[RMDB]
RNA sequence: GGGAACGACUCGAGUAGAGUCGAAAACCAAUGGGAAACCAUUGGCAACUCGGAAACGAGUUGAACGCGGAAUUACCUAUAAAACGCGCGACAAUGCGAUUUUAAGCAUUGUCGAUUACGCCCAUGUCGAUUUUAAGACAUGGAGCGAAUAUAGGAAGGAACGAGGUGCGUUCGCGCACUUUGUUCCAAAAGAAACAACAACAACAAC
Reactivity to DMS in 0.01 (KOAc 150mM, MgCl2 10mM, bicine 150mM(pH8.5), 24C), signal-to-noise 1, nucleotides 027 to 156: c000c000a000a000u030g000g010g020a230a160a280c000c000a030u010u000g030g000c000a010a020c000u000c000g010g010a180a100a220c010g020a020g030u000u000g000a090a170c040g010c000g020g020a270a140u000u010a170c000c000u000a040u000a020a060a120a090c030g000c050g000c000g000a020c000a000a010u010g020c020g000a300u000u000u000u000a090a300g000c010a010u000u000g040u000c000g000a040u000u000a030c030g020c000c000c000a000u000g040u000c000g020a210u000u030u010u010a080a200g010a010c000a000u000g020g000a040g040c020g020a020a100u000a020u010a020g020g030a300a280
Reactivity to 2A3 in 0.01 (KOAc 150mM, MgCl2 10mM, bicine 150mM(pH8.5), 24C), signal-to-noise 5, nucleotides 027 to 156: c000c000a000a000u000g000g000g010a040a010a030c000c000a000u000u000g000g000c000a000a000c000u000c000g020g030a060a040a050c000g000a010g000u000u000g010a080a010c010g010c010g010g010a050a030u050u030a090c000c000u000a010u020a000a010a010a030c010g000c000g000c000g000a000c000a000a000u000g000c030g120a180u030u070u070u300a090a010g000c000a000u000u000g000u000c000g000a000u000u010a080c010g000c010c000c000a000u000g000u000c030g040a110u000u070u090u300a110a020g000a000c000a000u000g000g000a020g000c000g000a000a000u020a000u000a000g040g010a040a080